Structure probing data (DMS and 2A3) for a 177-nucleotide construct. DMS (dimethyl sulfate) methylates the pairing face of unpaired adenines and cytosines. Conditions: 150 mM KOAc, 10 mM MgCl2 and 150 mM bicine (pH 8.5), 24 C. Source: RMDB library TTRDEL, as collected in RNAgym. For DMS, 5,269 sequencing reads were counted.
[RMDB]
RNA sequence: GGGAACGACUCGAGUAGAGUCGAAAAGAUAUGGACCGAGCCAUGACCCAGAAACUGGUCGGAAACGACCACUAUCUGCAUGGCGUUUGACGUCCUAAGUCGCGAACGCGCUCUUCGGAGCGCGUAAACUUGUUAGAACGUUCGCGUUCUAACAAGUAAAAGAAACAACAACAACAAC
Reactivity to DMS in 0.01 (KOAc 150mM, MgCl2 10mM, bicine 150mM(pH8.5), 24C), signal-to-noise 6, nucleotides 027 to 126: g000a040u000a300u000g000g010a020c010c020g010a080g020c000c000a000u000g000a250c280c250c100a020g000a010a070a140c300u000g000g000u000c000g010g000a050a090a170c000g010a010c000c000a000c050u000a220u000c000u000g000c020a010u000g000g010c000g010u000u010u010g010a120c300g000u000c000c000u000a040a100g010u000c020g000c170g020a170a030c010g010c010g010c000u000c000u000u020c170g000g000a000g010c000g020c000g000u000a000a080
Reactivity to 2A3 in 0.01 (KOAc 150mM, MgCl2 10mM, bicine 150mM(pH8.5), 24C), signal-to-noise 2, nucleotides 027 to 126: g010a010u080a030u150g030g000a010c020c050g040a020g000c020c000a020u040g020a180c140c040c010a010g000a010a020a010c030u020g010g000u000c020g020g000a080a080a010c010g010a010c020c020a000c020u080a090u000c010u010g030c000a000u010g000g010c000g040u050u090u130g040a030c010g000u000c000c010u030a150a050g040u050c010g010c060g170a120a020c010g000c000g000c000u030c020u060u090c300g100g010a040g010c000g000c000g000u000a000a000